RNA sequence: GGGAACGACUCGAGUAGAGUCGAAAAGGCAAAACUGGUCAAGCUCGGUGGCCCCCGCCUGACGGUCGCGACAGUUCCGUGGCGAUUAUAUCGGGAAGAGCAGGCGGCGACCUGAGCGCUCUUGCUGCUAAAUCGAGGGAACUUCGUGCGAGAAGUGAAAGUUUAUAUUGUUCGCAAUAUAAACUUUAAAAGAAACAACAACAACAAC
Reactivity to 2A3 in 0.01 (KOAc 150mM, MgCl2 10mM, bicine 150mM(pH8.5), 24C), signal-to-noise 5, nucleotides 027 to 156: g040g000c030a060a050a040a050c120u130g020g040u080c070a090a040g020c010u020c040g060g030u090g100g020c000c010c010c000c020g020c010c000u020g030a040c030g040g020u010c000g000c010g050a030c030a060g070u180u100c040c070g020u050g090g030c010g000a000u050u060a130u060a040u230c040g000g020g070a060a050g010a090g080c030a010g000g000c000g040g010c030g030a040c000c020u080g020a020g040c020g030c020u020c010u040u050g030c040u020g000c010u090a080a060a040u100c050g020a050g020g040g020a010a030c000u040u030c030g020u060g070c060g040a060g010a090a020g010u080g110
Reactivity to DMS in 0.01 (KOAc 150mM, MgCl2 10mM, bicine 150mM(pH8.5), 24C), signal-to-noise 2, nucleotides 027 to 156: g030g010c050a120a050a080a070c050u000g020g020u010c030a060a130g030c010u000c030g020g050u000g020g000c000c020c050c020c000g010c000c020u010g000a050c110g020g000u000c020g080c030g010a050c050a130g050u010u000c170c060g020u010g020g020c010g010a060u000u000a130u000a110u000c040g010g020g010a090a100g000a100g000c030a070g000g010c070g020g020c030g010a040c040c000u000g000a080g020c010g010c070u000c050u000u010g030c000u010g010c040u000a070a090a080u010c030g010a190g010g010g000a070a050c010u000u000c020g010u010g010c070g010a130g000a050a100g030u010g000

Notes
The record gives the reactivity of an RNA of 207 nucleotides to 2A3 and DMS. For DMS, 5,034 sequencing reads were counted. It was measured as part of the RMDB library OK3TST. Values are in units of 0.01, from 0 to 300, in steps of 10.